[RMDB]
RNA sequence: GGGAACGACUCGAGUAGAGUCGAAAAUUUUCUGUGCACUGUAGGUGGGGGUUGCUCAUUAUGUCCCUUUUUGAAGUUGGGAAAUAAUAAUCACAGCUAGCAAAUUUACAAUGCAAGUAACCUCAAACAAUGAUUCCACUUUCGAGUGGAAUCAUUGAAAAGAAACAACAACAACAAC
Reactivity to DMS in 0.01 (KOAc 150mM, MgCl2 10mM, bicine 150mM(pH8.5), 24C), signal-to-noise 2, nucleotides 027 to 126: u000u020u000u000c040u000g000u000g010c000a040c040u010g000u000a060g000g030u000g010g000g020g010g010u000u000g010c060u000c040a030u000u010a040u000g010u000c020c010c020u000u000u000u000u000g010a080a190g010u000u000g020g010g010a030a050a040u000a050a050u000a120a060u010c170a070c060a010g000c020u010a060g010c080a060a110a020u000u000u000a040c130a020a040u000g000c110a070a050g020u000a020a110c050c010u010c100a100a040a120